[RMDB]
RNA sequence: GGGAACGACUCGAGUAGAGUCGAAAACAGGACAGUUGACCCAAGUGUUUGUGGAACAACCUUACAACCUGGUAAGCAUGGAAUGUAACAUUCCAACCUAUUUACAUAUUGAGGAAUGUGUCAAUCAACUAAUAGGCUAUUUCGAUAGCCUAUUAGUAAAAGAAACAACAACAACAAC
Reactivity to DMS in 0.01 (KOAc 150mM, MgCl2 10mM, bicine 150mM(pH8.5), 24C), signal-to-noise 9, nucleotides 027 to 126: c050a080g000g010a120c210a080g010u000u000g000a230c030c010c010a050a080g020u010g000u000u000u010g030u000g020g010a100a110c090a040a060c100c050u000u000a060c100a090a120c090c060u000g000g010u000a050a060g010c140a140u010g010g000a030a060u000g010u010a120a070c070a020u000u000c010c000a040a210c130c060u000a020u000u000u010a070c080a040u000a060u000u000g010a290g000g010a040a030u000g010u000g000u000c070a070a080u010c160a100
Reactivity to 2A3 in 0.01 (KOAc 150mM, MgCl2 10mM, bicine 150mM(pH8.5), 24C), signal-to-noise 8, nucleotides 027 to 126: c030a000g020g090a010c020a070g040u020u030g060a050c030c000c000a040a040g110u140g130u200u170u050g100u150g040g020a190a100c020a020a030c020c000u070u090a050c030a060a100c030c020u050g060g020u110a050a010g030c060a070u090g020g030a070a020u040g030u120a120a030c010a060u000u000c000c000a000a030c010c000u010a050u070u150u060a050c050a040u110a120u120u100g070a070g060g110a050a020u050g030u010g030u050c020a030a080u060c020a040